[RMDB]
RNA sequence: GGGAACGACUCGAGUAGAGUCGAAAAUACUGGGAUCAAAAGCAGUUUUAGUACGUCAAGUCAUCUUAACUGUCCAUUGAGAUGGGACUCCUGUAAAAUCACUUUGUAUCUGGAGAUAGCAAUCCAAGUGUUCUGGCUGGGCGCAGUGGCUCACGCAGCCAGUGGUACGUUUCGACGUACCACUGGCAAAAGAAACAACAACAACAAC
Reactivity to 2A3 in 0.01 (KOAc 150mM, MgCl2 10mM, bicine 150mM(pH8.5), 24C), signal-to-noise 1, nucleotides 027 to 156: u170a040c030u080g000g020g120a140u070c040a020a040a030a010g070c030a080g010u000u030u080u050a010g040u050a060c090g010u070c120a140a040g010u000c000a050u030c130u080u050a050a130c010u050g010u000c000c050a060u060u260g140a220g020a140u050g000g020g070a010c080u030c000c040u060g020u080a030a070a070a100u100c010a050c110u090u070u140g090u050a040u050c030u060g020g000a040g050a030u060a010g030c050a000a140u060c060c010a180a090g040u000g050u190u020c050u020g000g040c030u040g050g020g000c000g000c040a000g070u110g090g000c000u000c020a070c070g010c000a000